[RMDB]
RNA sequence: GGGAACGACUCGAGUAGAGUCGAAAAUUUGGUCGAACCCGGCAUGGCGAAAAUCAGCGUUUUGUUAGCGACGCCCGCUACCGCACGAGAUUGCAACGUGGAAGUGCCAAUCUCUUCAAACGACAACCGUAGGGAGAUACUUCGGUAUCUCCCUACGAAAAGAAACAACAACAACAAC
Reactivity to 2A3 in 0.01 (KOAc 150mM, MgCl2 10mM, bicine 150mM(pH8.5), 24C), signal-to-noise 1, nucleotides 027 to 126: u000u010u070g040g000u010c000g030a000a080c010c030c000g000g030c080a080u130g060g000c050g080a050a030a040a100u120c060a060g030c040g010u050u130u120u170g140u050u060a040g000c020g050a030c000g080c060c040c000g000c020u040a040c010c050g030c020a060c030g000a000g010a000u000u020g010c020a060a040c060g040u100g110g200a170a080g030u030g040c030c010a040a020u000c000u000c000u110u140c040a070a090a000c020g000a050c050a040a030c040
Reactivity to DMS in 0.01 (KOAc 150mM, MgCl2 10mM, bicine 150mM(pH8.5), 24C), signal-to-noise 2, nucleotides 027 to 126: u010u000u000g010g000u000c010g000a070a240c060c040c000g000g020c050a050u000g030g000c010g000a060a030a090a070u010c190a120g000c060g010u010u010u000u000g020u000u000a080g020c010g010a120c070g010c010c080c010g000c020u000a020c050c070g070c100a070c220g030a050g020a030u000u000g000c020a080a020c080g020u000g000g000a060a130g020u000g000c150c030a010a020u010c010u000c010u010u000c100a010a060a100c050g010a060c150a050a070c200